Overview:
An RNA of 177 nucleotides, treated with 2A3 and DMS and read out base by base. The RNA was probed in 150 mM KOAc, 10 mM MgCl2 and 150 mM bicine (pH 8.5) at 24 C. For DMS, 957 sequencing reads were counted. As a SHAPE reagent, 2A3 marks flexible, mostly unpaired nucleotides at the ribose 2'-OH. For 2A3 the reverse transcriptase was SuperScript II with manganese.
RNA sequence: GGGAACGACUCGAGUAGAGUCGAAAACUAGACCAUGGCGAUCGAUCGAUCGUGAUCUCUCAUGUGUGGUACAGCACAGUGGAUCCACGUCGCGAUCUAUGAUCACUGAUCUGCUAGUGCUAGGUACGACUUGCGGCUAGUUCGCUAGCCGCAAGUCAAAAGAAACAACAACAACAAC
Reactivity to 2A3 in 0.01 (KOAc 150mM, MgCl2 10mM, bicine 150mM(pH8.5), 24C), signal-to-noise 2, nucleotides 027 to 126: c010u010a000g050a040c020c000a110u120g000g000c000g020a040u020c010g030a080u070c040g030a040u060c040g040u030g040a020u000c150u000c000u000c160a260u040g040u040g040u020g100g100u150a070c050a030g000c000a010c000a010g040u040g020g020a020u000c030c070a050c100g130u070c060g010c030g000a000u010c000u060a140u140g000a030u040c020a020c200u140g030a000u030c020u070g000c030u090a070g010u020g050c000u030a020g090g000u050a040c040
Reactivity to DMS in 0.01 (KOAc 150mM, MgCl2 10mM, bicine 150mM(pH8.5), 24C), signal-to-noise 1, nucleotides 027 to 126: c050u020a010g020a090c070c030a070u000g030g020c060g000a000u000c010g000a140u000c040g010a060u010c080g020u000g000a010u020c090u010c060u000c070a120u000g000u040g030u030g050g040u050a090c140a110g030c020a010c020a110g020u000g000g010a010u000c040c130a030c180g000u000c140g020c050g020a000u000c020u000a050u000g000a010u000c010a140c130u000g000a000u000c010u000g050c030u010a050g030u000g000c010u000a020g020g000u030a080c080